[RMDB]
RNA sequence: GGGAACGACUCGAGUAGAGUCGAAAAAUGUAGUUACUGAUAAAAAGUUGACUCAAUUUGUCAGGGCAGGCUUAAAAUCAGUUUUGGUAGUUACUUUUUGUCAUGGCUGAAGAGCAAUCCUCUGUCGGAGCUUACAUUGGUUCGCCGAUGUGAGCUCAAAAGAAACAACAACAACAAC
Reactivity to 2A3 in 0.01 (KOAc 150mM, MgCl2 10mM, bicine 150mM(pH8.5), 24C), signal-to-noise 9, nucleotides 027 to 126: a000u120g020u070a020g010u030u050a060c080u030g040a070u120a060a090a020a030a020g070u140u110g060a050c020u000c080a100a150u090u100u200g090u060c060a050g030g030g000c030a010g040g000c020u080u130a040a080a040a100u090c040a050g040u020u050u070u090g080g020u040a050g020u040u060a050c000u050u070u030u040u060g040u030c010a030u040g030g000c020u030g030a070a010g020a040g060c020a010a080u050c010c020u060c040u060g080u080c070g090
Reactivity to DMS in 0.01 (KOAc 150mM, MgCl2 10mM, bicine 150mM(pH8.5), 24C), signal-to-noise 9, nucleotides 027 to 126: a080u020g010u010a030g010u010u000a070c100u000g000a030u020a020a030a050a030a060g010u010u030g020a050c030u010c100a110a130u020u030u010g020u020c060a040g010g000g010c040a050g000g000c040u000u020a030a060a090a110u010c090a060g010u010u010u010u010g000g000u010a020g010u010u010a040c050u000u000u000u000u000g010u000c030a030u010g000g000c010u000g000a070a070g010a070g000c100a060a080u000c040c010u000c040u010g010u010c120g000
Notes: An RNA of 177 nucleotides, treated with 2A3 and DMS and read out base by base. It was measured as part of the RMDB library OK1LIB. The reactions ran in a buffer of 150 mM KOAc, 10 mM MgCl2 and 150 mM bicine (pH 8.5), at 24 C. For 2A3, 27,593 sequencing reads were counted. As a SHAPE reagent, 2A3 marks flexible, mostly unpaired nucleotides at the ribose 2'-OH. Reactivities are given for positions 27 through 126.